[RMDB]
RNA sequence: GGGAACGACUCGAGUAGAGUCGAAAAUCUGUUGAGAUAUGCGAUCGGAUAGUCAAAGUGGGACUACGGUCACAGCAACAGAAGUCAGACUGCGGCAAGUCACACGGACUAUACUGAAUCGUGACCACUUCUCGUGUGUAUUCGUACAUACGAGAAGAAAAGAAACAACAACAACAAC
Reactivity to DMS in 0.01 (KOAc 150mM, MgCl2 10mM, bicine 150mM(pH8.5), 24C), signal-to-noise 9, nucleotides 027 to 126: u000c020u000g010u010u010g010a070g010a080u010a090u010g000c020g010a010u000c010g000g000a070u000a010g000u000c010a080a100a160g040u000g000g000g010a020c000u000a100c240g020g010u000c000a020c010a010g010c020a170a070c130a110g010a090a090g010u010c120a080g010a140c010u000g010c050g010g000c030a100a020g010u000c010a040c030a030c040g000g000a020c000u000a010u000a070c010u000g000a070a030u000c010g010u000g000a190c040c030a190
Reactivity to 2A3 in 0.01 (KOAc 150mM, MgCl2 10mM, bicine 150mM(pH8.5), 24C), signal-to-noise 9, nucleotides 027 to 126: u020c020u030g110u080u170g180a110g020a100u140a060u280g020c040g010a000u000c010g000g020a030u010a020g010u000c050a150a200a110g040u030g040g030g000a000c010u050a070c170g050g000u000c010a010c010a020g020c000a010a060c020a100g210a220a010g070u030c050a030g030a220c010u010g010c010g040g000c040a030a000g010u000c000a000c000a000c030g030g000a000c020u010a010u080a230c010u010g040a100a060u010c010g000u010g030a030c000c010a040

The record gives the reactivity of an RNA of 177 nucleotides to DMS and 2A3. DMS (dimethyl sulfate) methylates the pairing face of unpaired adenines and cytosines. The 2A3 profile rests on 109,914 reads. Conditions: 150 mM KOAc, 10 mM MgCl2 and 150 mM bicine (pH 8.5), 24 C. For DMS the reverse transcriptase was MarathonRT.